Annotation
The record gives the reactivity of an RNA of 177 nucleotides to 2A3 and DMS. The reactions ran in a buffer of 150 mM KOAc, 10 mM MgCl2 and 150 mM bicine (pH 8.5), at 24 C.
RNA sequence: GGGAACGACUCGAGUAGAGUCGAAAAGGGAAUUGAACUCAGGACCUCUGGAAGAGCAGCCAGUGCUCCUGCCUGUAGAGGCAUUUUCUUCAUGAAGGCUGUCUCCUCUCUGAUGACUUGAUGACUCUCGUCUGCGAAUUUUCGAAUUCGCAGACGAAAAAGAAACAACAACAACAAC
Reactivity to 2A3 in 0.01 (KOAc 150mM, MgCl2 10mM, bicine 150mM(pH8.5), 24C), signal-to-noise 3, nucleotides 027 to 126: g060g010g000a020a040u040u040g030a100a060c040u000c020a010g060g050a080c020c030u040c010u030g010g050a030a010g020a030g000c000a000g010c000c020a020g020u060g020c020u060c030c040u050g030c020c000u110g050u240a030g080a040g150g000c000a040u070u090u110u090c070u060u020c030a090u160g100a130a070g020g000c020u030g080u150c020u000c000c000u000c050u050c040u040g030a070u060g010a050c020u070u090g030a040u110g070a120c010u040c000
Reactivity to DMS in 0.01 (KOAc 150mM, MgCl2 10mM, bicine 150mM(pH8.5), 24C), signal-to-noise 1, nucleotides 027 to 126: g070g010g000a060a160u050u020g000a090a110c180u000c050a020g000g000a010c030c010u000c050u000g000g000a020a050g000a060g040c100a060g000c050c000a080g000u010g000c170u030c040c040u000g030c140c010u010g000u030a060g040a060g000g000c020a000u000u020u000u000c070u020u000c010a120u060g000a070a120g000g030c080u000g000u000c000u000c050c030u000c010u000c080u000g000a050u000g000a150c080u000u000g000a030u030g000a030c020u000c020